[RMDB]
RNA sequence: GGGAACGACUCGAGUAGAGUCGAAAAUCUUUCACUCAGUGGAUAGAAGUGGAAUGUCUAAGGGCUUAUCCCCUACCACCAUGACAGGUGUGUAACCAAUGCAAUUUGAUACUUGUGCAGCCAUGGGGAUGCAGAUGGCCUUCGGGCCAUCUGCAUCAAAAGAAACAACAACAACAAC
Reactivity to DMS in 0.01 (KOAc 150mM, MgCl2 10mM, bicine 150mM(pH8.5), 24C), signal-to-noise 1, nucleotides 027 to 126: u000c050u010u000u010c030a060c040u010c060a180g030u020g010g010a040u000a070g000a140a060g020u000g010g020a020a040u010g000u000c070u000a060a100g000g020g010c010u000u000a050u000c090c020c000c000u000a080c020c000a040c010c000a040u000g000a130c190a140g000g010u020g000u020g000u000a110a060c150c050a030a070u000g020c130a060a090u000u000u000g030a090u010a100c110u000u000g030u020g000c030a060g000c070c040a090u000g000g000g040
Reactivity to 2A3 in 0.01 (KOAc 150mM, MgCl2 10mM, bicine 150mM(pH8.5), 24C), signal-to-noise 1, nucleotides 027 to 126: u000c010u000u020u020c000a010c000u060c030a070g080u070g150g130a090u120a280g090a270a000g050u010g080g030a120a140u090g030u000c030u030a040a090g050g050g000c030u070u060a090u100c000c000c000c040u000a030c000c030a010c010c000a040u120g080a050c010a050g000g010u000g020u050g060u020a000a000c090c020a030a000u050g040c030a030a070u020u000u270g040a030u030a170c030u080u060g010u030g130c000a030g020c050c000a010u060g050g000g050

The record gives the reactivity of an RNA of 177 nucleotides to DMS and 2A3. Source: RMDB library OK2TRN, as collected in RNAgym. For 2A3 the reverse transcriptase was SuperScript II with manganese.